RNA sequence: GGGAACGACUCGAGUAGAGUCGAAAAGGGAGUCGUGCCAAGAUCAUGAGUUUUGUUUGGUGUCUCGAGUAACACCUCCAGUCUGGGCCCAUCAGGUCAUUCACAUGGGGAUCACUCACGAGUUUGGUCUAUCUUUACCCUUCGGGGUAAAGAUAGAAAAAGAAACAACAACAACAAC
Reactivity to 2A3 in 0.01 (KOAc 150mM, MgCl2 10mM, bicine 150mM(pH8.5), 24C), signal-to-noise 1, nucleotides 027 to 126: g030g000g000a000g030u010c000g000u000g000c000c000a020a030g060a050u080c040a150u100g040a010g120u090u110u090u080g120u110u080u150g020g010u060g040u010c010u050c120g060a070g060u100a050a010c030a030c000c000u020c010c000a000g070u060c060u100g000g070g000c020c010c000a040u080c050a050g000g100u020c030a050u100u110c050a070c000a130u070g030g000g040g010a020u080c030a020c050u000c000a040c030g040a080g040u030u030u060g060g000
Reactivity to DMS in 0.01 (KOAc 150mM, MgCl2 10mM, bicine 150mM(pH8.5), 24C), signal-to-noise 2, nucleotides 027 to 126: g010g000g000a050g010u000c010g000u000g000c010c020a090a080g020a060u010c070a060u010g010a090g020u000u000u000u000g010u000u000u000g020g020u010g000u000c030u010c110g000a110g000u010a110a060c100a060c040c010u000c030c030a060g010u000c050u000g000g010g000c020c020c040a060u000c180a080g020g000u000c100a080u010u010c070a050c090a100u010g010g000g000g000a070u000c080a080c000u010c020a070c060g010a060g000u000u000u000g010g010

This 177-nucleotide RNA was probed chemically with 2A3 and DMS. DMS adducts were read by reverse transcription with MarathonRT. As a SHAPE reagent, 2A3 marks flexible, mostly unpaired nucleotides at the ribose 2'-OH. The data come from the RNA Mapping Database (RMDB), library OK2TRN. The 2A3 profile rests on 1,205 reads.